[RMDB]
RNA sequence: GGGAACGACUCGAGUAGAGUCGAAAAUAUGUCUUCAAUCAGGUCUUAUCAAGUGAUGUUAUGUUUGAAGAUGCCCAAGGUUUGAAAAAGUUCUACAAAGAAGUUAGAGCUUACCUAGGAAUCUCUUAGACGGGAGUGUUCGCACUCCCGAAAAGAAACAACAACAACAAC
Reactivity to 2A3 in 0.01 (KOAc 150mM, MgCl2 10mM, bicine 150mM(pH8.5), 24C), signal-to-noise 4, nucleotides 027 to 129: u300a070u170g000u000c000u000u000c000a000a010u010c010a020g000g140u040c030u100u120a150u180c100a270a150g060u150g160a020u010g030u180u130a100u020g000u000u050u010g000a000a000g000a000u020g010c030c000c010a000a020g070g020u000u170u300g130a040a020a000a000a000g010u000u000c030u000a040c060a000a250a050g200a200a050g160u050u010a010g000a010g010c000u000u000a010c020c010u020a010g060g020a100a060u000c030u020c000u100u090a030g010a060
Reactivity to DMS in 0.01 (KOAc 150mM, MgCl2 10mM, bicine 150mM(pH8.5), 24C), signal-to-noise 3, nucleotides 027 to 129: u120a070u000g010u010c030u000u000c000a070a000u000c030a070g000g030u050c050u030u000a240u020c200a080a070g020u050g010a000u010g000u010u050a060u030g000u010u000u000g020a030a010g080a050u020g020c040c000c000a000a000g040g020u040u000u050g030a090a060a010a060a010g040u030u060c010u010a200c010a090a130a170g000a160a060g020u030u030a030g040a030g050c010u040u000a040c020c050u000a110g000g060a080a090u050c040u030c010u040u170a060g040a250